[RMDB]
An RNA of 207 nucleotides, treated with 2A3 and read out base by base. The RNA was probed in 150 mM KOAc, 10 mM MgCl2 and 150 mM bicine (pH 8.5) at 24 C.

RNA sequence: GGGAACGACUCGAGUAGAGUCGAAAAGUAAUAGAUAACUGGAUGCAGCGUAGGUAGCAACGCAUAUCCAGUACGAAUGGUACCUGUAAAUAAAAUAUGCUGCCUAGUACAAGUACCAACAGAAGGAUAAGCGAUGGUGAUGUCAAUCACAUUUGCACUCGGCUGAAAAUUUCGAUUUUCAGCCGAGAAAAGAAACAACAACAACAAC
Reactivity to 2A3 in 0.01 (KOAc 150mM, MgCl2 10mM, bicine 150mM(pH8.5), 24C), signal-to-noise 1, nucleotides 027 to 156: g090u120a050a110u050a230g130a000u100a190a060c000u000g000g080a040u060g000c210a270g000c180g000u000a000g000g000u000a000g010c000a000a000c030g000c000a050u000a000u210c000c000a010g000u000a000c050g000a100a290u030g000g000u000a000c000c000u030g000u040a000a060a060u100a150a200a250a000u180a060u000g010c000u000g030c000c000u000a000g010u050a000c000a000a000g030u000a010c000c000a000a000c000a030g090a140a030g060g000a040u080a110a130g050c040g020a000u030g060g170u030g010a040u050g140u300c060a050a000u050c000a060c000a110u040u040u040g000c000a000